This 207-nucleotide RNA was probed chemically with 2A3.
The 2A3 profile rests on 1,842 reads.
RNA sequence: GGGAACGACUCGAGUAGAGUCGAAAAUCACAUCAGCGCGACUACGCUCUCGCUGCCUAAGCGACGGCUAGUCUGUCGGACCGGGAACGCCCUCGCCCCGGACCCCGGCAUCAGCUAGAGGGAUCAACCGAUGAGUUCGGUCGCGGGGCUCAUCGGGCUUAAGAAUGUCCUUCGGGACAUUCUUAAGAAAAGAAACAACAACAACAAC
Reactivity to 2A3 in 0.01 (KOAc 150mM, MgCl2 10mM, bicine 150mM(pH8.5), 24C), signal-to-noise 2, nucleotides 027 to 156: u080c010a050c050a140u160c070a050g150c070g020c060g120a000c010u050a020c160g020c030u000c040u000c010g000c020u030g030c030c100u180a110a010g020c010g000a020c010g010g000c010u010a010g030u000c020u010g020u010c010g010g000a010c000c000g000g000g000a060a030c020g090c000c000c000u010c010g000c010c000c000c010g000g030a090c050c070c000c000g000g010c020a060u080c080a060g140c020u100a010g010a010g040g000g000a050u160c070a050a090c000c050g000a000u000g000a000g010u020u010c010g010g130u060c030g090c070g080g000g000g010c000u000c000a000u000c000g000g000g000